[RMDB]
RNA sequence: GGGAACGACUCGAGUAGAGUCGAAAAAAUUGGAGUGGUGCAUGCCGAGCAUCAGUGAGCUCGUAAAUCCAGCUGAAACAAACCAACUGCGAACGACGAACGUUUCGCCCUCGCCGCUUAAACACCGGUGAGCGUCUCAACGGCAGGCCGAUGGGCCGCAUCUAGUAAGCUUCGGCUUACUAGAUGCAAAAGAAACAACAACAACAAC
Reactivity to 2A3 in 0.01 (KOAc 150mM, MgCl2 10mM, bicine 150mM(pH8.5), 24C), signal-to-noise 4, nucleotides 027 to 156: a000a000u140u100g020g000a080g050u070g010g010u030g010c030a020u080g030c050c020g010a020g000c010a020u060c010a000g060u070g100a010g000c010u020c040g090u110a040a070a060u010c020c020a010g020c010u020g090a100a080a060c030a040a070a040c030c030a070a050c040u070g010c010g020a010a010c020g140a050c050g040a180a040c040g020u020u080u070c000g000c000c000c000u010c010g000c000c000g000c030u020u040a040a040a000c020a010c030c000g000g000u010g020a000g010c030g050u020c020u020c050a070a050c030g000g020c020a010g030g010c000c020g160a180u150g000g040g010c020c040
Reactivity to DMS in 0.01 (KOAc 150mM, MgCl2 10mM, bicine 150mM(pH8.5), 24C), signal-to-noise 2, nucleotides 027 to 156: a110a110u000u010g020g020a110g080u000g010g020u000g030c030a030u000g020c030c020g010a120g050c020a020u000c010a070g030u000g030a090g040c020u030c050g030u010a080a040a080u000c040c030a080g010c030u000g030a110a100a140c160a030a030a110c070c010a050a090c030u000g020c100g030a040a050c070g040a110c060g000a100a080c050g040u000u000u010c020g010c020c070c030u010c020g030c000c000g000c050u010u010a200a070a100c070a100c100c030g000g000u000g010a010g030c080g030u000c020u000c010a050a080c010g010g010c000a060g020g020c000c000g000a160u010g010g000g000c000c020